[RMDB]
RNA sequence: GGGAACGACUCGAGUAGAGUCGAAAACAUGGCGUUUCACAAUGUGCGCCAUUAACAUUGUUUAUGCAAGCACGUUUCGCAAUGUACGGCGCAGAAACAUUGCCAACACAAAUACGCUUCACGAUGUAAAACAUCGGUGCGUUCGCGCACCGAUGAACAAUGUCCAAAAGUUCGCUUUUGGACAUUGAAAAGAAACAACAACAACAAC
Reactivity to 2A3 in 0.01 (KOAc 150mM, MgCl2 10mM, bicine 150mM(pH8.5), 24C), signal-to-noise 9, nucleotides 027 to 156: c050a040u050g000g000c030g030u050u150u160c150a140c040a130a180u190g020u030g040c000g010c000c000a010u030u030a010a010c000a010u020u020g060u090u160u120a120u160g020c090a060a080g060c060a050c160g010u020u070u070c040g010c020a010a010u020g010u030a030c070g040g030c070g010c060a020g110a010a050a000c000a010u010u090g020c030c040a120a010c070a010c010a060a140a030u180a060c060g000c030u050u060c060a040c090g080a070u070g050u230a030a060a090a020c000a000u010c000g000g000u000g010c000g000u020u040c180g000c000g000c070a000c000c000g000a000u000g000a000a000
Reactivity to DMS in 0.01 (KOAc 150mM, MgCl2 10mM, bicine 150mM(pH8.5), 24C), signal-to-noise 3, nucleotides 027 to 156: c070a100u000g010g030c030g010u000u000u020c060a160c060a080a140u000g030u000g010c000g000c030c030a080u000u010a090a080c030a070u000u000g010u000u000u000a050u020g020c030a080a140g010c070a110c070g010u010u000u000c150g000c040a030a020u010g030u000a110c030g030g000c050g060c040a130g010a160a070a070c000a050u000u010g000c040c030a060a060c040a110c120a060a070a130u000a050c050g000c030u000u000c060a100c040g010a140u000g000u000a080a040a080a200c000a010u000c010g010g000u000g000c000g020u000u000c280g030c020g060c010a000c000c000g000a010u010g000a060a080
Annotation: Structure probing data (2A3 and DMS) for a 207-nucleotide construct. The reactions ran in a buffer of 150 mM KOAc, 10 mM MgCl2 and 150 mM bicine (pH 8.5), at 24 C. For 2A3, 11,833 sequencing reads were counted.